Background: This 207-nucleotide RNA was probed chemically with DMS and 2A3. The DMS profile rests on 3,158 reads. It was measured as part of the RMDB library OK3TST.

RNA sequence: GGGAACGACUCGAGUAGAGUCGAAAAGUGGUGAGAGGCUUUGUUAUAAGCCUCCAACACCCAAAUUCAGUGAUAUAUUUGGCUAUUGCUGCAUAGAUAAAAUACGUGGUGAUUUAGAAAUAGGAGACCUACCGCAGGAUGAUGAGGAAGCGUGGGCCUACACACCUACAUUCGUGUAGGUGUGUAGAAAAGAAACAACAACAACAAC
Reactivity to DMS in 0.01 (KOAc 150mM, MgCl2 10mM, bicine 150mM(pH8.5), 24C), signal-to-noise 2, nucleotides 027 to 156: g000u020g020g000u000g010a070g010a040g000g030c000u010u010u000g040u010u010a160u010a020a020g010c000c010u020c000c020a040a100c020a030c010c000c050a090a080a080u000u000c080a120g020u000g010a120u000a110u000a100u010u000u010g020g030c040u000a080u000u000g000c000u000g000c050a160u000a110g030a160u010a090a070a100a150u000a050c040g020u000g020g030u020g010a080u000u000u000a130g010a030a040a110u000a040g030g050a110g010a070c020c000u020a060c040c040g020c060a080g040g000a040u000g000a070u010g000a080g010g000a020a090g010c040g020u030g020g010g050c090
Reactivity to 2A3 in 0.01 (KOAc 150mM, MgCl2 10mM, bicine 150mM(pH8.5), 24C), signal-to-noise 3, nucleotides 027 to 156: g130u130g050g000u040g000a190g000a010g030g010c000u070u050u060g200u180u230a210u100a200a000g010c010c000u000c000c000a000a010c000a000c000c010c010a030a080a010u090u080c030a010g010u010g110a020u050a030u020a030u090u120u110g060g000c010u030a030u030u040g000c010u010g000c110a040u060a110g110a030u130a070a120a060a040u140a070c110g010u030g020g000u010g030a090u050u050u160a060g050a010a090a030u050a060g080g000a050g010a030c000c020u050a060c010c020g020c050a020g040g020a010u050g000a020u020g010a010g020g020a000a060g000c020g020u040g010g000g000c000
For 2A3 the reverse transcriptase was SuperScript II with manganese. The 2A3 profile rests on 1,717 reads. Reactivities are given for positions 27 through 156. The reactions ran in a buffer of 150 mM KOAc, 10 mM MgCl2 and 150 mM bicine (pH 8.5), at 24 C.